Source information:
Chemical mapping of a 207-nucleotide RNA with DMS and 2A3. Values cover nucleotides 27 to 156. The reactions ran in a buffer of 150 mM KOAc, 10 mM MgCl2 and 150 mM bicine (pH 8.5), at 24 C. It was measured as part of the RMDB library M2RFPK.

[RMDB]
RNA sequence: GGGAACGACUCGAGUAGAGUCGAAAAGACAGCGCCCAACGCUUCACAACCUGAAAGAAGCGCCUGUUAUCAGGACGGUUGAUCCAUUUAGCGGUGCAGACCUCUGCAAACACCGGGUUGCAGAACAUAGAGGGAAAUUUGUUCGCAAAUUUCCCAAGUUCCAUGUAUUCUUCGGAAUACAUGGAACAAAAGAAACAACAACAACAAC
Reactivity to DMS in 0.01 (KOAc 150mM, MgCl2 10mM, bicine 150mM(pH8.5), 24C), signal-to-noise 1, nucleotides 027 to 156: g000a080c050a140g010c080g000c040c020c000a120a090c000g000c010u010u010c010a210c090a150a200c060c050u070g040a150a100a260g010a070a030g020c080g000c010c050u000g010u000u000a050u020c040a080g010g000a060c020g030g050u010u000g020a230u000c050c080a180u010u010u010a120g010c120g050g000u000g000c040a250g000a050c090c070u000c050u000g020c040a070a110a050c030a240c140c000g000g040g010u000u000g000c000a080g010a060a190c090a140u010a120g000a250g000g000g020a010a030a020u000u000u010g010u000u000c300g020c010a010a010a080u010u000u000c000c000c000a000a010
Reactivity to 2A3 in 0.01 (KOAc 150mM, MgCl2 10mM, bicine 150mM(pH8.5), 24C), signal-to-noise 2, nucleotides 027 to 156: g070a000c040a020g040c010g020c050c030c020a030a060c010g030c000u000u010c050a080c020a150a050c020c020u020g020a050a000a000g010a030a030g000c020g050c030c000u150g010u140u120a180u300c010a000g010g010a000c020g000g000u010u060g010a100u100c040c010a040u070u130u200a060g000c030g030g000u040g060c040a010g070a110c000c030u050c030u040g040c080a040a050a020c080a080c120c120g040g170g000u000u040g000c000a000g010a060a040c030a100u230a060g090a110g020g000g000a000a000a030u000u030u010g030u010u080c090g000c120a000a000a000u000u000u010c000c000c010a000a000